[RMDB]
RNA sequence: GGGAACGACUCGAGUAGAGUCGAAAAGAAAGAAAGCCGAAGCAGCGAAAGAGGUCAAACGUCAGGAUUUCGGGCAUAAAUACGACAUUAUGCAGAAAGCCGACUUCAAUGUCGUAAACAAAGAAAAAGCAUCGGAUACUUUCGAGUAUCCGAUGCUAAAAGAAACAACAACAACAAC
Reactivity to 2A3 in 0.01 (KOAc 150mM, MgCl2 10mM, bicine 150mM(pH8.5), 24C), signal-to-noise 1, nucleotides 027 to 126: g220a040a030a000g000a020a200a000g040c030c000g010a080a000g050c100a040g010c010g020a170a000a080g160a030g130g020u100c020a030a030a030c000g030u060c030a010g020g010a000u000u000u190c030g000g190g080c000a010u050a090a210a000u150a020c020g030a000c040a030u000u020a040u090g000c000a000g050a090a000a000g170c020c020g000a040c000u070u000c000a000a180u050g010u010c000g020u030a060a120a000c020a120a000a160g070a020a030a010a060
Reactivity to DMS in 0.01 (KOAc 150mM, MgCl2 10mM, bicine 150mM(pH8.5), 24C), signal-to-noise 1, nucleotides 027 to 126: g050a000a030a150g000a020a090a130g000c060c000g000a130a040g010c100a070g000c090g030a040a080a040g000a040g000g000u060c030a030a040a090c140g010u000c000a070g000g000a040u050u000u000c040g020g010g030c100a070u000a120a030a110u000a080c150g000a070c060a000u080u020a060u040g020c000a060g100a040a060a090g020c040c020g000a020c040u000u060c290a060a090u000g000u000c030g000u000a000a100a080c290a000a000a080g020a010a070a230a180